Structure probing data (DMS and 2A3) for a 177-nucleotide construct. The data come from the RNA Mapping Database (RMDB), library OK2TRN. The reactions ran in a buffer of 150 mM KOAc, 10 mM MgCl2 and 150 mM bicine (pH 8.5), at 24 C.
[RMDB]
RNA sequence: GGGAACGACUCGAGUAGAGUCGAAAAUCUUUAAACGCACGUUGCGCGUUUUCGAUGCCGUGCAUCUUAAAUAGCCAUUCCAGUACGCCGUAGUCGAUGCCGUAUGCGCCGCCGAAUCCGGUACGCCCACCACCAAUUCAUUCGUGAAUUGGUGGUGAAAAGAAACAACAACAACAAC
Reactivity to DMS in 0.01 (KOAc 150mM, MgCl2 10mM, bicine 150mM(pH8.5), 24C), signal-to-noise 3, nucleotides 027 to 126: u000c050u000u000u010a020a040a080c090g020c020a030c080g000u010u010g030c050g010c030g030u000u000u000u010c110g010a060u010g020c060c080g030u000g000c030a060u000c110u000u010a030a050a080u010a100g020c030c050a090u000u010c030c020a120g010u010a080c100g010c030c030g020u010a090g010u000c050g010a050u010g000c050c040g000u000a050u010g000c080g010c020c030g020c030c010g030a090a090u000c060c010g000g000u010a060c120g000c050c060
Reactivity to 2A3 in 0.01 (KOAc 150mM, MgCl2 10mM, bicine 150mM(pH8.5), 24C), signal-to-noise 3, nucleotides 027 to 126: u020c000u030u170u070a090a050a020c070g010c020a030c090g110u090u140g030c040g020c010g080u030u030u040u140c040g080a110u080g040c040c050g050u080g000c030a030u020c020u090u140a100a100a080u090a040g010c030c010a060u100u010c020c010a040g000u030a040c070g010c020c030g060u050a020g030u060c030g020a060u070g040c010c000g050u050a050u130g050c040g000c000c020g070c020c000g000a020a030u000c050c000g000g000u020a040c040g020c000c000
In probing experiments dimethyl sulfate is read out at A N1 and C N3, which are open when not base-paired. DMS adducts were read by reverse transcription with MarathonRT.